[RMDB]
RNA sequence: GGGAACGACUCGAGUAGAGUCGAAAAGAUAUGGAUAUAGGGCUUUUGACGCUGUGUCGGAAACGACACUGCGAUAAGCCUCAUAUCCUAAGUCAAACUAGAGGCCUCGUUCGCGAGGCCUCUAGAAGACACCAAUUAAGUUCGCUUAAUUGGUGUCAAAAGAAACAACAACAACAAC
Reactivity to 2A3 in 0.01 (KOAc 150mM, MgCl2 10mM, bicine 150mM(pH8.5), 24C), signal-to-noise 2, nucleotides 027 to 126: g000a000u020a010u050g000g010a000u000a000u010a070g050g020g000c040u130u170u300u300g130a020c000g000c020u040g000u000g000u020c000g000g000a010a030a000c010g000a000c000a000c020u000g000c000g040a070u080a270a000g000c010c000u000c010a000u010a000u010c010c010u000a020a000g000u030c040a090a070a110c010u000a010g000a020g070g050c030c020u050c060g040u110u120c270g020c020g010a000g030g000c040c000u000c010u000a000g000a010a020
Reactivity to DMS in 0.01 (KOAc 150mM, MgCl2 10mM, bicine 150mM(pH8.5), 24C), signal-to-noise 3, nucleotides 027 to 126: g000a030u000a080u010g010g000a010u000a000u000a070g010g000g020c000u000u000u030u020g030a160c000g000c000u000g010u000g000u000c000g020g010a010a000a040c000g010a010c000a000c000u000g000c000g020a120u000a030a040g020c000c000u000c040a010u000a000u000c000c000u000a000a070g000u000c000a150a130a300c000u000a010g000a010g020g000c000c000u000c010g020u000u000c160g020c000g010a010g000g020c000c000u000c010u000a010g010a100a130